An RNA of 177 nucleotides, treated with 2A3 and DMS and read out base by base.
RNA sequence: GGGAACGACUCGAGUAGAGUCGAAAACGGCUGAACAUCCUGAACAUCGGGCUGCCGCCGCUGCGCGAGCGCGCGGCCGACAUUCCGGCGCUCGCCGCGACGCUGCUCGCGCAGGCCGCGCGCCGCACACUAAUCCGAUAUUCGUAUCGGAUUAGUGAAAAGAAACAACAACAACAAC
Reactivity to 2A3 in 0.01 (KOAc 150mM, MgCl2 10mM, bicine 150mM(pH8.5), 24C), signal-to-noise 4, nucleotides 027 to 126: c020g020g020c030u070g070a100a030c010a090u040c000c010u030g050a140a060c040a260u180c080g000g020g020c030u040g030c040c020g050c020c020g030c070u120g050c030g000c010g030a090g030c020g000c000g000c000g040g000c030c000g030a010c010a100u160u080c070c050g050g040c030g030c090u130c140g060c040c000g040c050g010a000c080g040c180u190g030c040u040c040g030c010g000c020a030g000g020c000c000g020c000g000c030g010c000c010g010c010a010
Reactivity to DMS in 0.01 (KOAc 150mM, MgCl2 10mM, bicine 150mM(pH8.5), 24C), signal-to-noise 5, nucleotides 027 to 126: c050g010g000c010u010g010a090a100c070a060u000c010c010u000g010a110a130c200a110u010c050g020g010g020c060u000g020c090c050g020c010c040g020c090u000g030c120g020c030g000a070g020c000g020c010g020c000g010g010c040c020g010a050c150a130u000u010c090c040g010g000c030g010c130u000c140g000c060c030g000c050g010a040c110g010c090u000g020c100u000c130g000c080g030c060a070g000g000c020c010g000c030g010c020g010c010c020g000c070a160

Reactivities are given for positions 27 through 126.
DMS adducts were read by reverse transcription with MarathonRT.
For 2A3, 6,459 sequencing reads were counted.
For 2A3 the reverse transcriptase was SuperScript II with manganese.